[RMDB]
RNA sequence: GGGAACGACUCGAGUAGAGUCGAAAAGAUAUGGAGUCCCACUGAAGGUGGUGUCGGAAACGACACCCACUAGUUCAAUGGGACUCCUAAGUCAAAUCGGGAAACUAUGUUCGCAUAGUUUCCCGAACACAAUUACUACCUUCGGGUAGUAAUUGUGAAAAGAAACAACAACAACAAC
Reactivity to 2A3 in 0.01 (KOAc 150mM, MgCl2 10mM, bicine 150mM(pH8.5), 24C), signal-to-noise 3, nucleotides 027 to 126: g020a010u060a030u100g000g010a000g020u010c010c010c000a000c010u050g080a120a040g040g020u040g000g000u000g000u000c010g000g010a020a060a020c020g000a000c000a000c020c010c000a000c010u060a060g200u080u050c010a000a020u010g000g010g000a000c000u000c000c000u000a000a000g000u000c030a020a010a190u080c010g000g000g000a000a000a000c000u000a010u020g030u090u160c300g000c220a000u010a010g000u000u000u010c000c000c000g010a000a000
Reactivity to DMS in 0.01 (KOAc 150mM, MgCl2 10mM, bicine 150mM(pH8.5), 24C), signal-to-noise 4, nucleotides 027 to 126: g000a030u000a210u010g010g010a030g010u000c000c000c000a010c040u000g020a030a070g000g010u000g000g020u000g010u000c010g010g010a050a040a080c000g010a020c000a010c110c050c040a010c010u000a170g040u010u000c010a010a020u000g000g000g010a000c000u000c000c000u000a000a040g000u000c020a090a110a210u000c010g010g000g000a030a010a010c000u000a010u000g000u000u010c280g020c010a020u000a010g000u000u000u000c000c010c000g000a000a050